[RMDB]
RNA sequence: GGGAACGACUCGAGUAGAGUCGAAAAGACUGAUGUAGAGUUCGGUUGGAGCGACAAGUAUUUAGCUUGAGGUAGCUAAAUCACCUCGGUAUGAUUAGGGUGAGACCUAGGAACCGUAGGGGUAUUCAAUGCUGUAUUGCGUUCGCGCAAUACAGAAGAGUACUCAAAGAUUCGUCUUUGAGUACUCAAAAGAAACAACAACAACAAC
Reactivity to 2A3 in 0.01 (KOAc 150mM, MgCl2 10mM, bicine 150mM(pH8.5), 24C), signal-to-noise 9, nucleotides 027 to 156: g030a010c070u060g040a040u100g050u120a040g020a030g080u070u070c050g020g010u020u040g030g010a040g040c050g080a060c030a070a020g050u080a080u030u050u030a010g000c010u060u080g080a070g100g090u130a010g000c000u020a000a020a030u030c020a020c000c010u020c030g000g000u300a210u120g040a050u030u030a010g000g030g020u050g080a080g030a050c000c010u000a010g010g030a030a020c010c010g010u030a030g000g020g000g000u030a080u060u160c110a090a090u160g040c000u000g000u000a000u000u000g000c000g010u020u040c110g000c010g000c100a000a000u000a000c000a000g000a000a010
Reactivity to DMS in 0.01 (KOAc 150mM, MgCl2 10mM, bicine 150mM(pH8.5), 24C), signal-to-noise 3, nucleotides 027 to 156: g020a090c030u010g000a070u000g000u000a060g000a110g010u000u000c040g030g010u000u000g000g010a080g020c040g010a080c040a030a080g010u000a050u000u000u000a030g010c020u000u000g010a130g040g020u000a070g020c020u000a030a030a040u000c030a040c010c000u010c010g020g010u000a090u000g020a180u000u000a040g000g000g000u000g010a280g000a150c030c020u000a070g010g010a090a070c020c010g010u010a060g010g010g010g000u000a090u020u000c070a040a110u000g010c000u000g020u000a010u000u000g010c010g020u010u000c300g020c020g020c000a010a010u000a010c000a010g010a020a080